[RMDB]
About this RNA:
This 307-nucleotide RNA was probed chemically with 2A3 and DMS. The 2A3 profile rests on 7,603 reads. It was measured as part of the RMDB library POS240. The reactions ran in a buffer of 150 mM KOAc, 10 mM MgCl2 and 150 mM bicine (pH 8.5), at 24 C.
RNA sequence: GGGAACGACUCGAGUAGAGUCGAAAACUCAAGCGUGAGCUUGAGACGCCUACUACGGUAGGCGACACGAGCACUACGGUGCUCGUGAGGAACCUACGUGAGUAGGUUCCAGCACGGACGUGAGUCCGUGCAAGGCAACGGUGACGUUGCCAGGAUGUCUACGGACAUCCAACACGCACAGGGCAAACCAUUCGAAAGAGUGGGACGCAAAGCCUCCGGCCUAAACGGCAUUGCACUCCGCCGUAGGUAGCGGGGUUACCGAUGGUAGUAGACUCUUCGGAGUCUACAAAAGAAACAACAACAACAAC
Reactivity to 2A3 in 0.01 (KOAc 150mM, MgCl2 10mM, bicine 150mM(pH8.5), 24C), signal-to-noise 4, nucleotides 027 to 266: c000u000c000a000a000g010c020g060u150g080a030g020c010u000u000g000a000g020a010c020g010c000c000u000a000c010u020a030c200g090g000u000a000g000g000c000g000a010c000a000c000g010a000g010c010a010c020u070a060c270g130g000u000g000c000u000c000g000u000g010a030g000g000a000a000c000c000u000a000c010g100u090g080a070g020u000a000g000g000u000u000c000c000a010g000c010a000c010g000g000a000c040g110u150g090a070g030u000c010c000g000u000g000c010a010a100g020g000c000a010a000c020g030g050u090g030a020c010g000u000u000g000c000c000a000g000g000a000u000g000u000c010u020a030c300g070g000a000c010a010u000c010c010a020a030c070a020c080g070c020a080c040a110g100g060g000c000a010a020a010c000c000a000u000u000c010g000a040a010a010g000a010g010u000g010g030g020a000c010g000c050a070a010a000g000c000c010u000c000c000g000g000c000c000u050a070a060a030c000g000g010c040a020u040u300g090c050a090c140u090c070c090g000c000c000g030u010a020g000g020u010a000g000c010g000g000g000g000u010u040a050c010c050g100a070u110g110g000u020a020
Reactivity to DMS in 0.01 (KOAc 150mM, MgCl2 10mM, bicine 150mM(pH8.5), 24C), signal-to-noise 2, nucleotides 027 to 266: c010u010c000a000a020g010c010g020u040g000a200g000c020u000u000g010a020g000a200c090g000c000c000u010a000c000u020a100c110g010g010u000a000g000g000c000g000a250c010a020c010g010a020g050c000a010c000u000a080c240g040g010u000g010c000u010c000g000u000g000a130g020g000a050a020c000c000u000a010c000g000u040g000a160g020u000a000g020g000u000u000c010c000a060g010c020a000c020g010g000a020c010g000u050g010a300g010u000c000c000g030u020g000c000a060a060g020g000c010a000a020c020g000g000u010g000a140c000g010u000u000g000c000c050a020g000g010a000u000g000u000c010u020a120c150g010g000a000c010a000u010c000c010a110a070c260a040c120g010c110a080c100a080g000g000g000c020a240a230a270c010c000a000u010u000c000g010a060a060a050g000a030g040u000g000g000g000a050c030g000c020a100a100a050g000c000c000u000c040c010g000g000c020c000u000a040a110a060c050g000g000c020a060u040u010g020c140a110c170u010c180c110g000c000c010g060u010a000g010g010u000a050g000c000g000g010g000g000u000u000a020c080c040g000a120u010g000g010u000a150